[RMDB]
Chemical mapping of a 177-nucleotide RNA with DMS and 2A3. The 2A3 profile rests on 14,698 reads. 2A3 adducts were read by reverse transcription with SuperScript II with manganese.
RNA sequence: GGGAACGACUCGAGUAGAGUCGAAAACAUGUGUACUUCGGUACACAUGAAAUGACCGCCAUUAUUGGCUAAGGCUACACGCACGGCCGGGUCAAAUGCCGAAAAUCGUUGCGUUCGCGCAACGAAACUUACUAUCACGGUUCGCCGUGAUAGUAAGAAAAGAAACAACAACAACAAC
Reactivity to DMS in 0.01 (KOAc 150mM, MgCl2 10mM, bicine 150mM(pH8.5), 24C), signal-to-noise 5, nucleotides 027 to 126: c000a010u000g010u000g010u000a010c000u000u000c200g040g010u000a010c000a010c000a000u000g000a020a090a120u000g000a060c020c000g010c010c020a040u010u010a150u010u010g020g020c010u010a070a100g000g000c010u010a120c130a100c190g020c130a080c160g000g010c010c010g000g000g000u000c020a050a060a080u000g000c030c040g000a090a060a080a070u000c010g010u000u000g010c000g000u000u010c220g020c020g020c000a000a010c000g000a010a030a090
Reactivity to 2A3 in 0.01 (KOAc 150mM, MgCl2 10mM, bicine 150mM(pH8.5), 24C), signal-to-noise 6, nucleotides 027 to 126: c000a010u000g000u000g000u010a000c000u010u030c210g110g010u000a000c000a000c000a000u010g000a010a010a010u060g010a020c010c010g140c040c020a120u160u160a150u270u300g030g000c040u060a140a070g030g000c010u050a040c140a020c170g090c030a030c070g010g000c010c000g000g000g010u010c020a050a020a050u140g020c030c030g090a070a040a000a120u030c010g000u000u000g020c000g010u010u030c240g000c010g000c030a000a010c000g000a020a000a000
Reactivities are given for positions 27 through 126.